RNA sequence: GGGAACGACUCGAGUAGAGUCGAAAAGGGGCAGCCCAAGACCGAGAUGGGGGAAGAAGGUGGUUUGCCUGCCCUCCCAGGCUUGCUGGGUGUCUGCCCGUGGCUGGGCCCUGGCCCCGGGCUCAGGCAGCGGAAAAUCGUUCGCGAUUUUCCGCUGAAAAGAAACAACAACAACAAC
Reactivity to DMS in 0.01 (KOAc 150mM, MgCl2 10mM, bicine 150mM(pH8.5), 24C), signal-to-noise 1, nucleotides 027 to 126: g010g010g040g040c010a300g010c000c000c000a060a050g000a070c220c040g000a030g030a130u000g000g000g000g000g000a050a130g000a140a020g020g010u000g000g030u010u030u010g010c030c010u000g000c300c030c010u000c000c000c020a030g020g010c040u000u000g010c050u000g000g000g040u000g000u020c090u000g000c020c000c020g000u000g030g020c010u000g000g000g030c000c000c010u010g010g040c020c000c020c150g020g000g000c000u000c020a000g010g010